[RMDB]
RNA sequence: GGGAACGACUCGAGUAGAGUCGAAAAUGAGGUUGAUAAAUGAUUUGACAUCUAUCUUUGGGAAAGUCGGACUCCCUUUGAAACCAUUGGAAACAUGGAUCAGUGAAGACUUCUUUUCUUAUGGUAACUAACUCCAUAACUUCGGUUAUGGAGUUAGAAAAGAAACAACAACAACAAC
Reactivity to DMS in 0.01 (KOAc 150mM, MgCl2 10mM, bicine 150mM(pH8.5), 24C), signal-to-noise 5, nucleotides 027 to 126: u010g000a090g010g010u010u010g010a110u000a070a110a100u020g010a170u000u000u010g000a070c060a080u000c020u000a030u000c040u010u000u010g030g010g010a060a080a040g010u000c020g000g000a160c120u000c010c020c020u000u010u010g000a090a110a060c010c020a020u010u010g010g000a060a050a070c300a040u000g010g000a080u000c040a060g010u010g010a070a100g010a050c060u000u010c030u010u000u000u000c010u000u010a020u000g000g000u000a080a240
Reactivity to 2A3 in 0.01 (KOAc 150mM, MgCl2 10mM, bicine 150mM(pH8.5), 24C), signal-to-noise 3, nucleotides 027 to 126: u100g030a020g140g100u210u160g090a100u150a190a120a050u120g090a100u070u030u070g010a030c050a150u020c020u040a020u020c020u060u100u150g070g020g010a090a150a000g000u010c010g000g090a070c060u070c010c010c040u000u030u100g080a140a050a000c000c010a000u000u030g000g030a030a010a040c060a090u110g050g000a050u080c010a030g070u060g170a090a050g050a110c000u050u000c000u010u010u020u010c000u020u070a060u050g020g000u010a040a030

Chemical mapping of a 177-nucleotide RNA with DMS and 2A3. Values cover nucleotides 27 to 126. Source: RMDB library OK2TRN, as collected in RNAgym. The 2A3 profile rests on 2,643 reads. The reactions ran in a buffer of 150 mM KOAc, 10 mM MgCl2 and 150 mM bicine (pH 8.5), at 24 C.